An RNA of 177 nucleotides, treated with DMS and 2A3 and read out base by base. For 2A3, 3,266 sequencing reads were counted. 2A3 is a SHAPE reagent: it acylates the 2'-hydroxyl of flexible nucleotides of all four kinds. The data come from the RNA Mapping Database (RMDB), library OK1LIB.

[RMDB]
RNA sequence: GGGAACGACUCGAGUAGAGUCGAAAAUCUGUUUUAAUGUCACUUUUUUUUUCAGUUUGUGUGUGUGAAAUUGAAACGCCGCCUUAGAACACAUUCCGGUUCCGGUUAAUAUAUGGGCCCCAACAACCAAAUACGCUGGUUUCGGUCAGCGUAUUUGAAAAGAAACAACAACAACAAC
Reactivity to DMS in 0.01 (KOAc 150mM, MgCl2 10mM, bicine 150mM(pH8.5), 24C), signal-to-noise 3, nucleotides 027 to 126: u040c040u010g000u020u000u010u010a020a060u000g010u030c040a100c040u000u000u000u000u000u000u000u000u000c040a050g000u010u010u010g010u020g010u020g020u020g010u000g000a020a060a060u020u010g000a050a060a070c170g010c050c070g000c020c000u000u010a070g010a040a060c050a030c060a090u010u010c040c060g000g020u000u010c020c010g020g010u000u010a040a040u020a040u040a050u020g000g000g010c020c010c000c030a040a050c150a070a120c200
Reactivity to 2A3 in 0.01 (KOAc 150mM, MgCl2 10mM, bicine 150mM(pH8.5), 24C), signal-to-noise 4, nucleotides 027 to 126: u050c020u030g090u020u050u020u100a100a080u080g060u040c010a040c040u080u000u000u010u000u010u000u120u130c070a110g040u040u200u100g180u070g020u020g030u010g000u010g090a040a080a070u030u020g010a010a030a020c010g010c000c000g000c000c010u040u040a050g060a120a010c030a000c000a090u070u080c040c030g030g020u010u040c010c000g000g050u030u050a120a020u060a030u040a070u160g030g000g020c020c000c000c000a020a050c000a020a010c040